[RMDB]
RNA sequence: GGGAACGACUCGAGUAGAGUCGAAAAAGACCACGGAAGUAGGGAUGUUAGCGCAGCUGACAACGCGACGCUCCAUUUCCACGUAGGCUGUCUUCGGCCGCACGUCGCGCACCAUGUACCCCACGAAACUGAGGUCGGCGACGUAGACGAAGUCGCGUCUGUACCGGUGGUUCGCCACCGGUACAGAAAAAGAAACAACAACAACAAC
Reactivity to 2A3 in 0.01 (KOAc 150mM, MgCl2 10mM, bicine 150mM(pH8.5), 24C), signal-to-noise 1, nucleotides 027 to 156: a010g070a010c000c000a020c080g030g030a100a080g030u140a200g020g030g060a080u080g000u070u050a110g000c190g000c160a110g000c110u050g020a150c050a130a000c060g000c020g000a000c000g000c000u070c020c000a080u060u080u070c010c010a080c070g000u000a050g080g040c030u070g060u000c030u030u020c050g030g010c040c010g000c060a030c000g050u030c030g010c000g000c000a070c020c000a050u110g050u180a110c000c010c000c040a160c020g130a060a090a080c120u180g070a060g060g000u000c050g010g000c000g000a000c000g000u020a010g000a040c120g020a050a000g010u000c030g030c060g000